[RMDB]
Structure probing data (DMS and 2A3) for a 177-nucleotide construct. For 2A3, 2,056 sequencing reads were counted. For 2A3 the reverse transcriptase was SuperScript II with manganese. DMS adducts were read by reverse transcription with MarathonRT. Source: RMDB library OK2TST, as collected in RNAgym. The RNA was probed in 150 mM KOAc, 10 mM MgCl2 and 150 mM bicine (pH 8.5) at 24 C.
RNA sequence: GGGAACGACUCGAGUAGAGUCGAAAAUCGAUCUGGCGGUGAAAGCGCAUCCGGCGCACAUAUUCCAUCGGGUCUUUCUUCACCACGAAGCUUCCGGCUGGCACGGUGAGCCAGUCGUAAAGCCGCAAUGACGUCCUAUGUUCGCAUAGGACGUCAUAAAAGAAACAACAACAACAAC
Reactivity to DMS in 0.01 (KOAc 150mM, MgCl2 10mM, bicine 150mM(pH8.5), 24C), signal-to-noise 3, nucleotides 027 to 126: u000c120g000a020u000c010u000g000g000c060g000g000u000g000a040a300a080g000c050g000c000a170u020c240c150g030g030c020g040c020a020c080a110u020a300u010u010c000c010a050u010c020g010g030g020u000c000u000u000u000c030u010u010c090a180c060c070a090c160g030a080a170g000c000u000u010c240c010g010g000c000u020g000g020c000a080c160g020g020u000g010a080g020c010c000a020g030u000c000g000u010a020a010a010g000c000c090g000c170a060
Reactivity to 2A3 in 0.01 (KOAc 150mM, MgCl2 10mM, bicine 150mM(pH8.5), 24C), signal-to-noise 2, nucleotides 027 to 126: u060c020g010a020u000c000u010g040g000c000g000g050u010g030a040a020a010g010c000g030c030a040u100c050c120g260g030c000g040c040a020c060a050u090a030u120u090c010c000a010u000c000g000g010g030u010c000u030u010u020c010u110u110c070a120c050c010a020c050g080a080a000g000c010u010u030c000c000g020g020c000u000g020g000c010a020c180g270g040u070g030a020g000c000c000a030g010u000c000g000u040a020a010a020g000c020c020g050c030a080